[RMDB]
RNA sequence: GGGAACGACUCGAGUAGAGUCGAAAAAACUCUUUAAGGCAAUAACGAACUAAUUCUAAGCAAGUAAUGGAUAAAUGCCAGGGUCACUAUCUAGCCAUAAUAGUGCUUGACAGUAUGAUACUAACUGAAUAUGGUAAACCGUUCGCGGUUUACCAAACUAUAAACAUAUGUUCGCAUAUGUUUAUAGAAAAGAAACAACAACAACAAC
Reactivity to 2A3 in 0.01 (KOAc 150mM, MgCl2 10mM, bicine 150mM(pH8.5), 24C), signal-to-noise 5, nucleotides 027 to 156: a000a000c130u130c020u090u120u080a130a020g030g000c040a070a060u110a140a080c060g060a040a030c050u060a070a060u170u030c040u110a090a020g060c060a070a030g050u130a100a080u110g050g020a040u040a120a120a020u080g010c010c000a020g020g020g000u030c000a000c030u010a010u020c020u030a010g020c010c000a040u050a190a060u050a160g080u070g040c020u020u030g030a010c000a000g040u060a070u080g070a030u050a170c050u080a170a030c020u040g060a050a060u130a080u120g000g000u000a010a000a000c020c000g000u020u020c180g010c030g080g000u000u000u000a000c000c000a000a010a000
Reactivity to DMS in 0.01 (KOAc 150mM, MgCl2 10mM, bicine 150mM(pH8.5), 24C), signal-to-noise 3, nucleotides 027 to 156: a040a040c030u000c020u000u000u000a100a080g010g020c030a070a110u010a080a130c060g020a090a110c040u000a030a080u000u000c050u010a080a090g010c040a070a100g000u000a090a080u010g010g000a120u000a040a060a080u000g010c010c010a060g010g010g000u010c020a040c020u000a020u000c020u000a090g010c060c070a130u000a100a100u000a080g040u000g010c010u000u000g000a040c030a050g020u000a050u010g010a120u000a060c070u000a050a060c050u000g000a050a100u000a140u000g000g020u000a010a010a020c010c010g020u000u010c300g050c030g020g020u000u000u000a000c010c000a000a000a080

An RNA of 207 nucleotides, treated with 2A3 and DMS and read out base by base. The data come from the RNA Mapping Database (RMDB), library M2RFPK. Reactivities are given for positions 27 through 156. The reactions ran in a buffer of 150 mM KOAc, 10 mM MgCl2 and 150 mM bicine (pH 8.5), at 24 C. For 2A3 the reverse transcriptase was SuperScript II with manganese.